Conditions: 150 mM KOAc, 10 mM MgCl2 and 150 mM bicine (pH 8.5), 24 C.
An RNA of 177 nucleotides, treated with 2A3 and DMS and read out base by base.
For 2A3, 1,468 sequencing reads were counted.
DMS adducts were read by reverse transcription with MarathonRT.
2A3 adducts were read by reverse transcription with SuperScript II with manganese.
RNA sequence: GGGAACGACUCGAGUAGAGUCGAAAAUGGCAAGGAAAUUUUGAGGCAUGGGUACAGGAUCCUUUACAUGUAAGACCUAUUGCUCAUGCAAUUUGGGAUCCUCAUUUUGGUCAACCGGCUGUAGAAGAGGGUGUAAUUCAUUCGUGAAUUACACCCUAAAAGAAACAACAACAACAAC
Reactivity to 2A3 in 0.01 (KOAc 150mM, MgCl2 10mM, bicine 150mM(pH8.5), 24C), signal-to-noise 2, nucleotides 027 to 126: u020g010g030c060a020a070g060g030a100a100a070u140u100u080u090g070a060g030g010c000a010u030g000g000g010u070a060c010a050g000g040a110u190c000c050u000u040u060a090c060a120u210g070u150a030a000g000a020c000c000u060a110u060u190g000c010u030c030a010u030g030c010a020a050u050u040u040g020g000g030a010u000c000c020u000c010a020u050u050u020u050g050g000u030c010a020a020c040c010g070g000c060u060g030u190a060g010a260a030g040
Reactivity to DMS in 0.01 (KOAc 150mM, MgCl2 10mM, bicine 150mM(pH8.5), 24C), signal-to-noise 3, nucleotides 027 to 126: u010g000g010c120a070a050g000g010a060a070a150u010u000u000u000g010a150g000g020c010a020u000g000g000g010u010a090c300a040g000g000a050u010c040c040u000u010u000a140c190a090u020g010u000a060a040g000a080c030c040u000a120u010u000g000c040u000c030a040u000g010c010a020a040u000u000u000g010g000g010a160u000c030c010u020c030a070u000u000u000u000g020g000u000c090a090a130c060c050g000g010c050u010g020u010a070g000a090a130g000